[RMDB]
RNA sequence: GGGAACGACUCGAGUAGAGUCGAAAAGAUAUGGAACUUCAAUGAGAUGGGAACUACUACUUUGGUCGGAAACGACCAUGGUAGCCCAUCGAGAAGUUCCUAAGUCAAAGGAUGGUUCGCCAUCCAACCUUUUAACAUAGUUCGCUAUGUUAAAAGGAAAAGAAACAACAACAACAAC
Reactivity to 2A3 in 0.01 (KOAc 150mM, MgCl2 10mM, bicine 150mM(pH8.5), 24C), signal-to-noise 9, nucleotides 027 to 126: g030a030u100a070u200g020g000a000a010c010u020u020c080a210a300u300g040a140g000a260u030g020g010g000a080a080c110u240a030c010u010a000c010u300u020u020g010g000u010c010g030g000a040a090a110c010g000a010c000c000a000u010g010g000u000a010g010c020c000c000a000u000c000g000a000g000a000a000g000u000u000c000c000u000a050a030g020u010c050a150a060a060g010g000a000u010g030g070u090u140c300g030c100c000a000u000c000c000a020a070
Reactivity to DMS in 0.01 (KOAc 150mM, MgCl2 10mM, bicine 150mM(pH8.5), 24C), signal-to-noise 9, nucleotides 027 to 126: g000a040u010a300u010g010g000a010a010c000u000u000c000a200a160u010g030a190g010a010u000g010g000g000a140a030c060u020a300c010u000a010c020u000u000u000g000g020u000c000g010g000a100a110a180c000g010a010c000c000a010u000g000g010u000a000g000c010c010c000a000u000c000g000a150g010a010a020g010u000u000c000c000u000a010a080g010u000c040a100a110a170g010g000a010u000g000g000u010u020c300g010c010c000a010u000c000c000a050a070

Notes: An RNA of 177 nucleotides, treated with 2A3 and DMS and read out base by base. As a SHAPE reagent, 2A3 marks flexible, mostly unpaired nucleotides at the ribose 2'-OH. The 2A3 profile rests on 33,326 reads. The DMS profile rests on 17,852 reads. The data come from the RNA Mapping Database (RMDB), library TTRDES. 2A3 adducts were read by reverse transcription with SuperScript II with manganese. The RNA was probed in 150 mM KOAc, 10 mM MgCl2 and 150 mM bicine (pH 8.5) at 24 C.